[RMDB]
This 207-nucleotide RNA was probed chemically with 2A3 and DMS. The DMS profile rests on 3,853 reads.
RNA sequence: GGGAACGACUCGAGUAGAGUCGAAAAUCUUAUUGGGAAAGCAUUUAUUUUACCACUUAAGUAUCACAUUAGCUGUUCCUUUUCUGUUGCUGCCCUUUAUCAGGUUGAAAAAAUUCCCUACUAUUCCUAGUUCGGAGAGUUUUUAUCAUGAGUGGUGAUGUGUAAUGAACUUCGGUUCAUUACACAUAAAAGAAACAACAACAACAAC
Reactivity to 2A3 in 0.01 (KOAc 150mM, MgCl2 10mM, bicine 150mM(pH8.5), 24C), signal-to-noise 2, nucleotides 027 to 156: u020c010u050u070a060u060u090g020g000g000a110a160a000g020c020a050u060u200u130a160u110u250u250u100a110c020c040a000c040u040u060a070a010g020u040a040u160c050a030c020a240u160u130a040g050c070u020g010u060u000c000c000u030u000u110u090c090u080g110u150u060g000c010u040g000c010c040c020u000u030u040a050u160c030a070g000g040u070u080g030a060a020a000a000a000a110u020u020c030c010c000u010a050c030u040a100u110u090c000c030u020a000g030u080u050c040g020g010a060g000a000g080u000u050u050u080u070a110u070c050a070u120g010a000g060u050g040g030u090g010
Reactivity to DMS in 0.01 (KOAc 150mM, MgCl2 10mM, bicine 150mM(pH8.5), 24C), signal-to-noise 2, nucleotides 027 to 156: u000c010u000u010a030u000u000g010g000g000a060a060a070g030c130a110u000u010u000a110u000u010u000u010a080c000c020a050c080u000u000a060a060g010u000a110u010c090a060c040a140u000u010a070g050c030u010g010u000u010c010c010u000u000u000u020c080u010g010u010u000g010c000u000g000c010c020c050u000u000u010a080u020c070a040g040g000u010u010g000a000a000a050a060a040a070u000u000c000c020c000u010a040c020u000a090u000u010c110c110u000a070g010u010u000c080g050g000a050g010a060g000u000u000u000u000u000a060u030c020a050u010g010a080g030u000g050g010u000g010